[RMDB]
RNA sequence: GGGAACGACUCGAGUAGAGUCGAAAAUUCUGCAUUGAUGCCGCAGCGGGGACGGGGGCCAGGCCAUGGCUGCUCAGAUACAUGGGCCCAUGAAAUUGAUGAACUGAGAGCUGCUUCCAGCCCUGCGACAUAUAGCCUAGUUCGCUAGGCUAUAUGUAAAAGAAACAACAACAACAAC
Reactivity to 2A3 in 0.01 (KOAc 150mM, MgCl2 10mM, bicine 150mM(pH8.5), 24C), signal-to-noise 4, nucleotides 027 to 126: u040u020c010u040g060c020a090u010u200g090a050u100g100c030c040g040c090a040g010c020g010g020g000g000a030c020g010g010g010g020g020c030c020a030g010g020c020c000a010u010g010g000c030u020g020c000u010c010a050g030a050u210a130c100a090u020g010g020g000c000c010c010a010u020g040a040a080a040u250u220g040a140u100g040a110a080c070u050g020a050g020a010g150c050u040g000c000u040u000c010c020a030g000c010c000c010u020g000c010g010
Reactivity to DMS in 0.01 (KOAc 150mM, MgCl2 10mM, bicine 150mM(pH8.5), 24C), signal-to-noise 5, nucleotides 027 to 126: u010u000c010u000g010c070a090u010u000g000a100u010g020c080c050g020c100a110g020c050g030g020g000g010a080c070g010g010g000g000g000c050c180a060g010g010c110c040a040u010g010g010c160u010g000c010u000c010a020g010a170u000a110c170a110u000g010g010g000c010c020c010a020u010g010a100a070a130u020u000g010a130u020g010a110a090c080u000g000a130g010a140g010c050u010g000c040u000u000c010c010a140g010c010c020c010u000g010c040g000

This 177-nucleotide RNA was probed chemically with 2A3 and DMS.
The RNA was probed in 150 mM KOAc, 10 mM MgCl2 and 150 mM bicine (pH 8.5) at 24 C.
2A3 adducts were read by reverse transcription with SuperScript II with manganese.
Source: RMDB library RFMREP, as collected in RNAgym.
DMS adducts were read by reverse transcription with MarathonRT.